[RMDB]
RNA sequence: GGGAACGACUCGAGUAGAGUCGAAAAGAAAUUAUAGACUCAUCGGCUCAGGACCAUUGCGGUUGUGCAAAACGGUGUUAUUGCCGAGAAGGGAACGCAUGAGAGGUUGGUGAAAACGUCAAAGGGCUCGGAUUAGAGAGUUCGCUCUCUAAUCCGAAAAAGAAACAACAACAACAAC
Reactivity to 2A3 in 0.01 (KOAc 150mM, MgCl2 10mM, bicine 150mM(pH8.5), 24C), signal-to-noise 1, nucleotides 027 to 126: g000a000a050a000u220u110a050u060a150g000a050c030u000c000a070u000c020g020g000c000u030c040a000g060g000a030c020c000a030u010u120g020c010g070g050u180u030g120u130g010c010a000a090a030a000c010g000g030u060g060u140u110a210u080u100g000c000c000g010a010g030a010a020g050g000g020a000a100c020g000c100a110u110g000a000g000a000g120g010u100u070g000g020u050g030a050a020a000a000c000g020u000c010a000a000a070g040g020g000c000
Reactivity to DMS in 0.01 (KOAc 150mM, MgCl2 10mM, bicine 150mM(pH8.5), 24C), signal-to-noise 2, nucleotides 027 to 126: g000a100a110a070u070u110a180u020a270g000a020c040u020c000a120u000c040g000g020c020u010c050a050g000g020a260c040c000a130u020u040g010c150g040g030u000u060g010u010g000c000a020a070a080a180c090g000g000u000g010u010u030a030u030u010g000c000c000g030a030g000a070a080g010g000g000a080a050c030g000c080a080u040g000a130g050a010g000g010u000u000g000g000u010g000a100a070a010a100c050g030u010c080a020a050a100g010g010g010c140

An RNA of 177 nucleotides, treated with 2A3 and DMS and read out base by base. It was measured as part of the RMDB library RFM100. The reactions ran in a buffer of 150 mM KOAc, 10 mM MgCl2 and 150 mM bicine (pH 8.5), at 24 C.